The record gives the reactivity of an RNA of 177 nucleotides to DMS and 2A3.
The 2A3 profile rests on 1,864 reads.
For DMS, 1,671 sequencing reads were counted.
The reactions ran in a buffer of 150 mM KOAc, 10 mM MgCl2 and 150 mM bicine (pH 8.5), at 24 C.

RNA sequence: GGGAACGACUCGAGUAGAGUCGAAAAAUCAGCCGCCAUCAUCUAUGGGACGCUGCUGUGGACGUCGCUGUCCCUGGCCUACCCGACCUCUGCAGCCGCAGCCGUCUCCGCAGACAGCGCCAUGACCGGUCAUAAAUGGGUUCGCCCAUUUAUGACCAAAAGAAACAACAACAACAAC
Reactivity to DMS in 0.01 (KOAc 150mM, MgCl2 10mM, bicine 150mM(pH8.5), 24C), signal-to-noise 2, nucleotides 027 to 126: a090u000c030a070g010c040c010g000c050c020a060u020c080a090u000c100u000a050u020g000g000g020a070c040g020c030u000g020c010u000g080u010g000g000a040c040g010u000c130g010c030u000g020u000c050c060c020u010g020g010c010c060u000a110c070c070c020g000a090c080c020u000c060u000g000c080a080g010c040c070g010c050a080g000c050c090g010u000c040u020c010c040g040c020a020g000a110c050a050g030c030g010c000c020a100u010g010a160c130c080
Reactivity to 2A3 in 0.01 (KOAc 150mM, MgCl2 10mM, bicine 150mM(pH8.5), 24C), signal-to-noise 1, nucleotides 027 to 126: a000u080c050a020g070c040c020g050c100c000a030u040c060a010u020c050u180a030u060g000g060g130a100c010g000c000u010g010c010u010g060u050g000g030a030c050g030u080c040g000c030u020g070u100c070c000c060u030g020g000c000c000u050a110c000c020c010g050a100c030c030u070c040u060g010c010a000g010c000c000g070c000a000g020c070c010g040u000c000u020c060c000g000c000a010g100a200c010a020g020c000g000c010c000a010u040g010a010c050c080